This 177-nucleotide RNA was probed chemically with DMS and 2A3. For DMS the reverse transcriptase was MarathonRT.
[RMDB]
RNA sequence: GGGAACGACUCGAGUAGAGUCGAAAAAGCUAUGACUCUACGGAGUCAUAGCAAUUUAUGCGUCAAACUCGGCUCAGUUUGGUGAACUUUGAUUUGACAUCACUGGGCAUAGUUUGUCGCAUAAUAAUCUGCAAAUGAUAUUCGUAUCAUUUGCAGAAAAAGAAACAACAACAACAAC
Reactivity to DMS in 0.01 (KOAc 150mM, MgCl2 10mM, bicine 150mM(pH8.5), 24C), signal-to-noise 5, nucleotides 027 to 126: a080g000c010u000a000u000g000a020c000u000c000u000a140c200g020g000a020g010u000c000a000u000a010g010c000a010a000u010u010u000a000u000g010c010g010u000c000a000a000a010c010u000c090g010g010c000u010c010a010g010u010u020u020g020g000u010g000a110a090c100u010u030u020g000a200u030u010u000g000a260c010a010u010c020a030c000u000g000g000g010c000a020u000a010g000u000u000u000g000u000c000g020c000a000u000a000a010u020a090a120
Reactivity to 2A3 in 0.01 (KOAc 150mM, MgCl2 10mM, bicine 150mM(pH8.5), 24C), signal-to-noise 9, nucleotides 027 to 126: a010g000c010u010a010u000g000a000c000u000c010u020a050c250g090g010a000g000u000c000a000u000a000g000c000a000a000u010u000u000a000u000g000c010g000u000c000a000a000a000c000u010c040g020g000c010u000c010a040g050u080u200u160g020g010u030g030a100a080c070u110u110u170g160a220u130u120u200g070a070c000a010u010c000a000c000u000g000g000g000c010a000u000a000g000u000u000u010g000u000c000g000c000a000u000a000a000u000a000a010
2A3 adducts were read by reverse transcription with SuperScript II with manganese. The reactions ran in a buffer of 150 mM KOAc, 10 mM MgCl2 and 150 mM bicine (pH 8.5), at 24 C.